The data come from the RNA Mapping Database (RMDB), library RNAMAK. An RNA of 207 nucleotides, treated with 2A3 and DMS and read out base by base. The 2A3 profile rests on 2,851 reads. The DMS profile rests on 4,411 reads.

[RMDB]
RNA sequence: GGGAACGACUCGAGUAGAGUCGAAAAGGGACUUCGGUCCCGGAUAGGAUAUGGACCGAUCUCUAGCGUGACGCGAUAAGUCCACAGGUCGGAAACGACCUAGGGACUUUUGACGCGUUCGGGUCGGUCCUAAGUCAGUGACGCCGUUCGCGGCGAAGGUAAAUCUACAUUUCGAUGUAGAUUUACCAAAAGAAACAACAACAACAAC
Reactivity to 2A3 in 0.01 (KOAc 150mM, MgCl2 10mM, bicine 150mM(pH8.5), 24C), signal-to-noise 3, nucleotides 027 to 156: g010g000g000a000c040u040u120c260g120g010u000c020c000c010g010g010a060u090a040g140g010a020u020a050u210g000g000a010c010c000g000a070u010c110u000c070u080a070g090c020g170u160g040a030c060g000c000g120a060u030a120a020g000u000c000c000a080c040a080g010g010u000c010g010g050a060a110a040c020g000a000c000c010u030a020g000g000g000a000c020u020u000u000u020g070a020c020g000c000g010u000u010c010g000g000g000u000c000g000g000u000c000c010u000a000a000g010u000c030a000g040u030g160a060c000g020c000c010g000u040u120c290g000c030g140g000c000g020a080a020
Reactivity to DMS in 0.01 (KOAc 150mM, MgCl2 10mM, bicine 150mM(pH8.5), 24C), signal-to-noise 2, nucleotides 027 to 156: g000g030g010a010c000u000u000c270g030g000u000c000c000c000g000g020a100u000a080g010g000a110u020a230u000g000g000a050c010c010g020a030u000c000u000c060u010a160g030c140g020u000g010a040c030g030c020g050a170u000a030a020g020u030c000c000a060c020a030g000g010u000c000g000g020a110a120a200c020g020a000c000c000u000a020g010g010g010a020c010u000u000u000u000g050a180c060g000c010g000u010u000c020g000g010g000u000c000g000g000u000c020c000u000a000a130g000u000c020a100g000u010g000a130c000g020c000c010g020u000u000c250g030c010g010g000c040g010a030a030